[RMDB]
RNA sequence: GGGAACGACUCGAGUAGAGUCGAAAAGUAUAGAAGCAUGAGACCGCAUGCGUUAUACGAUGAAUCUCGGUCGAAUCCGUUGUGCGAAAGCACUUCGGUAAUGCAUAUCGGUAGACAGAUCGGCCCGGAUCAGCUACCGUAAUUAGUACGGGCAAGAAUAAUCCCUACCAUUCGUGGUAGGGAUUAUAAAAGAAACAACAACAACAAC
Reactivity to DMS in 0.01 (KOAc 150mM, MgCl2 10mM, bicine 150mM(pH8.5), 24C), signal-to-noise 2, nucleotides 027 to 156: g030u000a040u000a040g050a160a140g030c010a000u000g010a210g000a110c120c130g020c060a060u020g020c000g000u010u000a040u000a050c030g040a160u010g000a140a120u000c020u000c040g010g050u000c030g010a140a140u000c000c000g060u000u010g010u000g000c010g000a150a110a230g020c000a030c000u000u000c000g030g000u000a020a070u000g010c090a180u000a150u010c030g010g020u000a100g000a140c010a110g000a090u000c020g030g020c040c050c040g000g000a100u000c040a110g030c010u000a030c000c010g020u010a060a100u000u000a140g010u020a040c020g000g000g050c060a140a090g000a120
Reactivity to 2A3 in 0.01 (KOAc 150mM, MgCl2 10mM, bicine 150mM(pH8.5), 24C), signal-to-noise 2, nucleotides 027 to 156: g060u050a000u040a180g070a210a070g000c000a010u050g000a030g000a190c040c050g010c010a020u030g090c000g000u040u070a060u060a150c060g010a040u120g100a100a080u120c120u000c100g000g000u000c000g000a030a000u060c000c000g000u000u000g000u000g000c040g100a080a000a050g000c000a020c050u000u000c000g010g000u010a080a000u020g070c060a070u080a040u300c000g010g010u000a000g040a130c110a050g010a010u000c010g080g000c000c050c030g020g010a000u020c030a010g000c000u000a000c020c000g000u010a090a080u100u120a020g130u070a060c000g000g000g030c000a010a010g060a010